[RMDB]
RNA sequence: GGGAACGACUCGAGUAGAGUCGAAAACGAUUCGGACCGGCUCAUCUCGACAAGAGGCGGCAGUCCUCAGUGCUCUUACUCUUUUCUGUAAAGAGGAGACUGCUGGACUUGCCGCCCAAGUUCGAGCAUGGGCCAAUUCCGAACGAAGGGUCGCGCGGUUAUGGUGAAUGUUCGCAUUCACCAUAACAAAAGAAACAACAACAACAAC
Reactivity to DMS in 0.01 (KOAc 150mM, MgCl2 10mM, bicine 150mM(pH8.5), 24C), signal-to-noise 1, nucleotides 027 to 156: c010g030a210u000u000c010g030g010a070c300c250g040g040c030u000c010a050u000c010u000c020g040a060c050a300a130g000a170g020g020c010g060g110c000a040g000u010c010c020u020c000a010g100u000g040c080u000c010u010u000a220c030u010c000u060u020u000u000c250u000g050u000a060a030a040g010a040g000g000a040g000a170c000u000g000c090u000g030g020a040c010u000u010g020c000c020g060c000c000c000a030a070g070u000u000c000g000a050g000c080a010u000g010g000g000c010c000a000a010u000u000c000c010g000a000a070c020g000a300a050g050g050g040u000c060g000c030g040c120g000
Reactivity to 2A3 in 0.01 (KOAc 150mM, MgCl2 10mM, bicine 150mM(pH8.5), 24C), signal-to-noise 3, nucleotides 027 to 156: c000g090a180u000u000c000g010g010a010c040c070g030g000c000u000c010a010u010c010u010c000g010a010c020a070a110g080a160g060g000c000g000g000c000a000g000u010c000c000u000c010a090g000u150g270c020u020c020u140u180a230c010u040c030u060u100u140u090c240u250g290u300a000a020a000g000a000g010g000a010g000a010c000u010g070c100u020g000g000a000c000u050u200g000c000c020g000c000c000c000a010a000g000u040u030c000g000a000g010c040a000u000g000g010g000c000c000a000a000u000u000c000c000g010a000a010c000g040a020a060g050g000g040u100c070g000c010g030c100g210

This 207-nucleotide RNA was probed chemically with DMS and 2A3. The reactions ran in a buffer of 150 mM KOAc, 10 mM MgCl2 and 150 mM bicine (pH 8.5), at 24 C. For 2A3 the reverse transcriptase was SuperScript II with manganese. The data come from the RNA Mapping Database (RMDB), library VIROID. The 2A3 profile rests on 2,494 reads.